Chemical mapping of a 207-nucleotide RNA with 2A3.
RNA sequence: GGGAACGACUCGAGUAGAGUCGAAAAUACCGCAGGGCUGCGGUGCGGCAGUGUGGAGACCUGCCGUAAGCCGUGUUGUUUUGACAACCGGGAGAAAGCGUAUGCGGAGGCAGCGCUUUCAGGGUCUAAAAGUAUGGGAUCUUCGGAUCCCAUACAAGCAUAAGCCAAAGUUCGCUUUGGCUUAUGCAAAAGAAACAACAACAACAAC
Reactivity to 2A3 in 0.01 (KOAc 150mM, MgCl2 10mM, bicine 150mM(pH8.5), 24C), signal-to-noise 3, nucleotides 027 to 156: u100a000c020c000g050c030a060g050g140g010c080u070g000c050g050g050u040g000c010g000g000c000a010g010u080g020u170g240g070a050g030a080c000c010u000g000c000c010g030u020a040a010g050c010c010g040u030g010u020u010g000u000u020u050u070g060a040c060a080a070c050c000g000g060g000a200g020a010a000a000g000c000g010u010a280u190g010c010g040g060a070g240g000c000a000g000c000g000c000u000u000u020c000a020g020g010g020u040c010u040a080a060a030a040g000u000a000u000g000g010g000a000u000c000u040u010c110g100g010a000u000c010c000c000a000u000a000c000a000a000
Reactivities are given for positions 27 through 156. The data come from the RNA Mapping Database (RMDB), library M2RFPK.